[RMDB]
RNA sequence: GGGAACGACUCGAGUAGAGUCGAAAAUCAUCAUCGAAGAGCAUUUUGUUACCAUUGUAAUAAAUAUCCACUCUGUCAUAUGUAUAAAUGAAGUACUGUUCAAACAUGAUGAGAUGUUUAUAUGUUGGCAUAGUAGUGAGAUCUACGUUUGGUAAUGCUCCUUCAGCCAAUUCGUUGGCUGAAGGAGAAAAGAAACAACAACAACAAC
Reactivity to DMS in 0.01 (KOAc 150mM, MgCl2 10mM, bicine 150mM(pH8.5), 24C), signal-to-noise 1, nucleotides 027 to 156: u010c020a120u010c100a100u010c050g070a060a160g010a070g010c080a080u010u020u000u000g020u000u000a000c010c050a040u010u000g000u000a030a010u000a030a090a150u000a080u000c030c080a010c030u000c030u000g020u010c010a060u010a020u000g030u000a090u020a040a080a030u000g020a180a120g070u000a030c080u010g000u000u000c060a120a080a090c150a020u010g010a040u000g010a180g040a180u010g020u000u000u010a040u010a030u010g010u010u010g000g000c040a060u000a130g010u000a040g030u000g000a300g010a020u000c020u000a010c060g000u000u010u010g010g000u000a000a200u010g040
Reactivity to 2A3 in 0.01 (KOAc 150mM, MgCl2 10mM, bicine 150mM(pH8.5), 24C), signal-to-noise 3, nucleotides 027 to 156: u060c010a010u050c020a050u080c040g160a090a030g020a020g060c030a060u070u080u150u250g040u050u000a010c010c000a030u020u050g020u060a000a110u080a140a210a050u230a080u030c000c000a000c010u000c000u000g010u000c000a020u060a010u290g010u000a000u010a020a010a020u060g050a060a040g070u100a110c060u050g070u100u100c080a050a160a080c070a110u220g060a030u110g030a100g000a090u100g040u000u010u000a000u000a000u040g040u050u000g000g000c000a040u060a130g090u050a000g010u040g030a190g010a110u000c030u040a070c090g100u010u020u010g020g010u000a000a010u070g020
Structure probing data (DMS and 2A3) for a 207-nucleotide construct. The data come from the RNA Mapping Database (RMDB), library OK3TST. For 2A3 the reverse transcriptase was SuperScript II with manganese. Values cover nucleotides 27 to 156.